[RMDB]
RNA sequence: GGGAACGACUCGAGUAGAGUCGAAAAAAGUGUCAGCAAUGCAGGCCACACAACAUACUGUUAAUUCUAUUAUUAAAGAGUGUGUGUAUGCACAGUCUACAAGAAAUGGGUUUUGUGGUGAUGGCAAACUACUUGAUCUAUUCGUAGAUCAAGUAGUAAAAGAAACAACAACAACAAC
Reactivity to DMS in 0.01 (KOAc 150mM, MgCl2 10mM, bicine 150mM(pH8.5), 24C), signal-to-noise 9, nucleotides 027 to 126: a080a040g010u000g010u010c040a040g010c080a080a050u000g010c060a070g010g000c010c020a030c020a030c050a050a040c020a050u010a250c060u010g000u000u000a070a070u000u010c070u010a100u010u000a210u010u010a080a110a040g000a050g010u000g020u000g000u000g000u010a050u020g020c010a020c030a030g000u000c010u000a070c290a050a040g000a030a050a070u000g010g010g010u000u000u000u000g020u000g010g020u000g000a090u000g010g010c030a060a070
Reactivity to 2A3 in 0.01 (KOAc 150mM, MgCl2 10mM, bicine 150mM(pH8.5), 24C), signal-to-noise 9, nucleotides 027 to 126: a000a000g100u060g020u050c020a020g020c030a060a080u090g010c010a030g110g000c010c000a010c010a010c000a040a020c000a030u140a100c020u040g050u200u100a100a060u120u040c020u060a170u270u030a100u080u140a300a220a010g020a110g000u010g000u000g000u020g070u110a060u250g000c000a000c000a020g180u000c000u040a040c040a080a010g060a040a050a030u120g020g000g030u040u090u060u070g010u020g000g020u030g040a130u060g020g000c000a050a040